[RMDB]
RNA sequence: GGGAACGACUCGAGUAGAGUCGAAAAGAUAGAUCGUGCGCGCAAUCGCAUCGGCCAUCAGGAAUGCGGAAUGCGCGAUGAAGGUGGUGCGCAACGCCACAUCCGCCGUGCCAAGCGCGAUAUCGGACGUGAUCAUAGGCUUCGGCCUAUGAUCACGAAAAGAAACAACAACAACAAC
Reactivity to 2A3 in 0.01 (KOAc 150mM, MgCl2 10mM, bicine 150mM(pH8.5), 24C), signal-to-noise 2, nucleotides 027 to 126: g100a050u080a020g090a070u080c000g010u050g080c060g000c010g040c010a010a020u070c040g010c010a000u110c030g070g050c090c000a160u150c030a090g080g010a170a090u040g000c090g050g090a100a150u140g010c000g000c020g020a010u000g000a000a060g120g010u140g000g010u120g000c060g020c090a130a070c150g000c040c000a000c020a040u020c010c070g000c040c010g000u020g040c000c000a080a110g000c040g020c010g000a000u060a030u110c040g110g040a040
Reactivity to DMS in 0.01 (KOAc 150mM, MgCl2 10mM, bicine 150mM(pH8.5), 24C), signal-to-noise 2, nucleotides 027 to 126: g000a130u010a040g000a000u010c010g040u000g030c020g030c030g000c050a060a060u000c160g000c030a010u000c080g020g000c020c160a190u010c210a080g020g000a070a030u000g010c030g000g010a100a120u000g010c010g010c020g010a030u020g000a040a090g030g000u000g000g040u020g000c080g000c170a050a100c240g000c080c020a040c040a020u000c030c010g030c020c000g000u000g010c020c100a070a220g000c020g000c000g000a050u010a060u010c040g020g030a210